The data come from the RNA Mapping Database (RMDB), library M2PK50. An RNA of 177 nucleotides, treated with DMS and 2A3 and read out base by base. For 2A3 the reverse transcriptase was SuperScript II with manganese. Conditions: 150 mM KOAc, 10 mM MgCl2 and 150 mM bicine (pH 8.5), 24 C.
[RMDB]
RNA sequence: GGGAACGACUCGAGUAGAGUCGAAAACUCUGACGCUUCGGCGUCAGAGAAACCUCUAAGCAGAUUGGCGACGACGACGCUGCGGAGCGCGUUUGCCAACAAAAACGCAUAGAUUCGUCUAUGCGAAUGAUAGACAAAGUUUCGACUUUGUCUAUCAAAAAGAAACAACAACAACAAC
Reactivity to DMS in 0.01 (KOAc 150mM, MgCl2 10mM, bicine 150mM(pH8.5), 24C), signal-to-noise 6, nucleotides 027 to 126: c000u010c000u010g010a020c000g030c000u010u010c210g040g020c000g030u000c000a010g000a010g000a010a060a120c040c010u000c210u020a120a130g020c160a090g010a180u010u000g000g000c010g000a060c120g010a110c040g020a150c050g010c020u000g010c190g020g010a050g020c010g010c010g000u000u000u000g010c000c010a030a010c070a030a060a070a110a150c020g000c000a010u000a000g010a040u000u000c150g000u000c000u000a000u000g000c000g000a020a030
Reactivity to 2A3 in 0.01 (KOAc 150mM, MgCl2 10mM, bicine 150mM(pH8.5), 24C), signal-to-noise 7, nucleotides 027 to 126: c000u000c000u000g010a000c000g000c010u040u050c210g160g000c000g000u000c000a000g000a000g010a000a000a000c010c010u050c080u120a100a100g080c060a060g090a300u020u020g010g000c020g010a060c080g010a010c010g060a100c010g090c040u170g110c120g210g100a050g000c020g000c010g000u000u040u210g010c010c010a000a000c020a010a070a000a020a010c010g000c000a000u000a000g020a020u020u040c120g030u000c120u000a000u000g000c000g010a020a060